Chemical mapping of a 177-nucleotide RNA with 2A3 and DMS.
Source: RMDB library TTRDES, as collected in RNAgym.
Conditions: 150 mM KOAc, 10 mM MgCl2 and 150 mM bicine (pH 8.5), 24 C.
RNA sequence: GGGAACGACUCGAGUAGAGUCGAAAAGAUAUGGACCAAGUAUGGAGCUGUCUAUUCGGAAACGAAUAGCAGCUAUGAAGUACUGGUCCUAAGUCAAAAGGACGACUGAGUUCGCUCAGUCGUCCAACGAAUAAUAGGACUUCGGUCCUAUUAUUCGAAAAGAAACAACAACAACAAC
Reactivity to 2A3 in 0.01 (KOAc 150mM, MgCl2 10mM, bicine 150mM(pH8.5), 24C), signal-to-noise 1, nucleotides 027 to 126: g010a000u020a010u050g000g000a000c010c000a120a090g010u000a010u060g040g040a020g010c010u030g130u300c000u060a010u000u000c000g010g000a020a010a000c010g000a010a010u000a000g000c020a000g010c010u010a060u020g000a000a000g000u010a000c000u010g000g010u020c000c000u010a000a020g000u000c010a010a020a100a200g010g000a010c010g010a010c010u020g000a000g070u090u240c300g140c110u000c000a000g000u000c000g000u000c000c000a010a000
Reactivity to DMS in 0.01 (KOAc 150mM, MgCl2 10mM, bicine 150mM(pH8.5), 24C), signal-to-noise 3, nucleotides 027 to 126: g010a020u000a090u010g000g010a020c010c010a040a110g000u000a000u000g000g010a010g010c000u010g010u010c010u000a000u000u000c000g020g000a020a020a050c020g020a010a000u000a000g000c010a010g010c000u000a090u000g000a180a300g000u000a000c000u000g020g020u000c000c010u000a010a040g000u010c020a090a100a180a200g020g000a020c000g010a010c010u010g000a010g020u000u010c290g020c000u010c000a020g020u000c000g020u000c000c000a010a040